Source: RMDB library TTRINS, as collected in RNAgym.
An RNA of 177 nucleotides, treated with DMS and read out base by base.

RNA sequence: GGGAACGACUCGAGUAGAGUCGAAAAGAUAUGGAGUGGCAAGACAUGCAUACGCGAGCUCAAAAUCUGCAUAUCGGAAACGAUAUGCAGAUUUUGAGCUCAUGCAACAGCUUGGCACUCCUAAGUCCCUUCCAAAUAUGUUCGCAUAUUUGGAAGGAAAAGAAACAACAACAACAAC
Reactivity to DMS in 0.01 (KOAc 150mM, MgCl2 10mM, bicine 150mM(pH8.5), 24C), signal-to-noise 2, nucleotides 027 to 126: g010a070u000a300u010g000g010a020g020u000g010g000c010a040a020g010a070c150a280u010g000c020a030u000a170c300g080c280g000a020g000c010u000c000a000a000a000a000u000c000u000g000c000a000u000a010u010c010g020g000a140a090a140c030g020a020u010a010u020g000c000a000g000a000u000u000u000u000g000a000g000c030u000c000a000u000g020c030a010a060c270a090g000c010u000u000g000g000c010a010c000u000c000c000u000a010a080g000u010c030